[RMDB]
RNA sequence: GGGAACGACUCGAGUAGAGUCGAAAAGCAACGGGUGUCUAAGAUAUGCCCUAAUGUCUGAGAACCCUUUUACAGUACUUGAGAGCCUAUCUCAAAGUCAACAGGAGAUCAGGACCUUCACACAAGAGACAGGUCUAAUCUUCGGAUUAGACCUGUCAAAAGAAACAACAACAACAAC
Reactivity to DMS in 0.01 (KOAc 150mM, MgCl2 10mM, bicine 150mM(pH8.5), 24C), signal-to-noise 2, nucleotides 027 to 126: g050c190a080a180c290g000g000g000u000g060u010c000u000a080a040g000a080u010a030u010g050c100c020c010u020a060a030u000g000u020c000u000g000a150g030a040a100c050c000c010u020u000u010u010a080c290a110g000u050a040c030u000u000g010a010g010a070g010c100c080u020a020u020c020u000c020a030a030a040g010u000c190a130a070c080a070g010g000a000g020a060u000c040a030g040g000a020c040c030u000u000c150a090c130a010c250a010a080g020a210
Reactivity to 2A3 in 0.01 (KOAc 150mM, MgCl2 10mM, bicine 150mM(pH8.5), 24C), signal-to-noise 3, nucleotides 027 to 126: g010c010a000a070c050g000g010g000u060g030u070c020u130a150a000g020a250u050a080u080g010c000c000c000u030a110a100u160g050u050c000u010g040a060g060a110a060c000c000c000u060u000u000u000a030c030a020g030u070a080c020u030u070g050a000g000a000g090c000c130u210a150u080c000u000c000a080a150a060g100u100c090a070a030c010a060g000g090a020g000a060u020c040a060g090g000a140c020c000u150u190c090a050c000a000c000a080a010g070a000

Chemical mapping of a 177-nucleotide RNA with DMS and 2A3. The reactions ran in a buffer of 150 mM KOAc, 10 mM MgCl2 and 150 mM bicine (pH 8.5), at 24 C. For DMS, 1,792 sequencing reads were counted. The 2A3 profile rests on 1,503 reads. For 2A3 the reverse transcriptase was SuperScript II with manganese. The data come from the RNA Mapping Database (RMDB), library OK1LIB.